[RMDB]
RNA sequence: GGGAACGACUCGAGUAGAGUCGAAAAGAUAUGGACCAUUUUGAUGUGAGAUCCGUCCUUCGCGAAACGAUGAUGUCGGAAACGACAUAUCGGAGAAGCGGAUCUCACAUCAAAAUGGUCCUAAGUCGCCUUUAUUUACGUUCGCGUAAAUAAAGGCAAAAGAAACAACAACAACAAC
Reactivity to DMS in 0.01 (KOAc 150mM, MgCl2 10mM, bicine 150mM(pH8.5), 24C), signal-to-noise 1, nucleotides 027 to 126: g010a170u020a300u010g000g040a010c030c010a020u010u010u000u010g000a010u010g060u030g000a010g040a000u000c010c000g000u050c300c090u000u000c010g000c270g000a080a170a180c000g000a010u000g010a040u000g000u010c000g000g000a110a070a210c050g000a020c010a010u000a010u000c000g010g000a110g030a050a020g010c010g000g000a000u000c000u010c000a000c020a030u000c000a000a000a000a000u000g010g000u000c000c000u030a000a050g010u010c080